[RMDB]
RNA sequence: GGGAACGACUCGAGUAGAGUCGAAAAGAUGCCACCGCUCGGGUGGAUCGGGUUUGCCAACGCACGUAGCACCUUGCCAUCUGGAUCCGGCGGGGUGAUGGCAGCCAGAUUCUCGGCCAUGGUGUGAAAGAGUAGUGUUCUUCGGAACACUACUCUUAAAAGAAACAACAACAACAAC
Reactivity to 2A3 in 0.01 (KOAc 150mM, MgCl2 10mM, bicine 150mM(pH8.5), 24C), signal-to-noise 3, nucleotides 027 to 126: g060a030u230g110c030c010a020c000c010g020c060u150c070g140g020g000u070g040g020a010u010c000g000g000g000u200u300u170g000c000c000a140a050c070g070c110a060c130g150u210a060g000c020a000c000c000u010u020g010c000c000a070u090c140u200g170g070a210u050c030c090g010g020c030g000g040g000g000u010g060a070u080g000g020c010a000g000c000c000a010g020a010u070u000c030u000c000g080g000c050c050a110u080g000g010u030g000u040g070a120
Reactivity to DMS in 0.01 (KOAc 150mM, MgCl2 10mM, bicine 150mM(pH8.5), 24C), signal-to-noise 2, nucleotides 027 to 126: g010a050u020g010c000c010a030c050c160g000c110u030c110g010g000g020u020g010g000a010u000c010g000g000g010u000u020u040g030c000c020a040a170c180g000c120a040c060g010u000a190g010c030a050c020c000u000u000g010c000c010a120u030c050u070g030g000a110u020c180c130g030g000c050g000g010g000g000u010g000a030u010g020g010c050a040g020c000c000a040g030a040u000u000c020u020c050g010g000c020c090a120u010g000g040u010g030u010g000a070

Structure probing data (2A3 and DMS) for a 177-nucleotide construct. For 2A3, 1,492 sequencing reads were counted. Source: RMDB library OK1LIB, as collected in RNAgym.